[RMDB]
RNA sequence: GGGAACGACUCGAGUAGAGUCGAAAACAUAAUAAGCUGGCAAGUACAAAGAUAGUUUGUACUACCUUUUCUUCAUACUUCAUUUUGCCAAGCUCGUCUAACUUUUGUUUAAUUAACGUCUGACCACGAAGCCUAUAUUAUUCGUAAUAUAGGCUUCAAAAGAAACAACAACAACAAC
Reactivity to 2A3 in 0.01 (KOAc 150mM, MgCl2 10mM, bicine 150mM(pH8.5), 24C), signal-to-noise 4, nucleotides 027 to 126: c000a010u220a170a010u080a190a020g020c020u000g010g000c030a060a010g030u020a020c010a030a030a010g050a120u110a050g140u010u050u200g020u040a020c020u010a010c010c000u010u020u050u080c040u100u070c030a060u070a140c030u080u110c030a150u050u040u050u070g000c000c000a050a030g000c020u010c010g070u000c030u040a040a060c000u050u060u080u080g080u050u100u060a080a100u070u060a040a020c000g010u000c060u070g110a030c000c210a010c090
Reactivity to DMS in 0.01 (KOAc 150mM, MgCl2 10mM, bicine 150mM(pH8.5), 24C), signal-to-noise 9, nucleotides 027 to 126: c050a080u010a090a080u010a090a060g020c080u000g010g010c020a070a040g010u000a030c100a020a020a040g010a110u010a060g010u000u000u000g010u010a030c010u000a080c040c010u000u000u010u010c090u000u000c110a090u010a060c080u010u010c120a110u000u000u000u010g010c010c020a040a110g020c010u000c090g010u000c070u000a070a080c080u000u000u000u000g010u010u000u000a060a090u010u010a070a070c080g000u000c050u000g000a150c050c090a090c200
Chemical mapping of a 177-nucleotide RNA with 2A3 and DMS. For 2A3 the reverse transcriptase was SuperScript II with manganese. It was measured as part of the RMDB library OK2TST. DMS adducts were read by reverse transcription with MarathonRT. High DMS reactivity at an A or C suggests that its Watson-Crick edge is free. The 2A3 profile rests on 4,404 reads.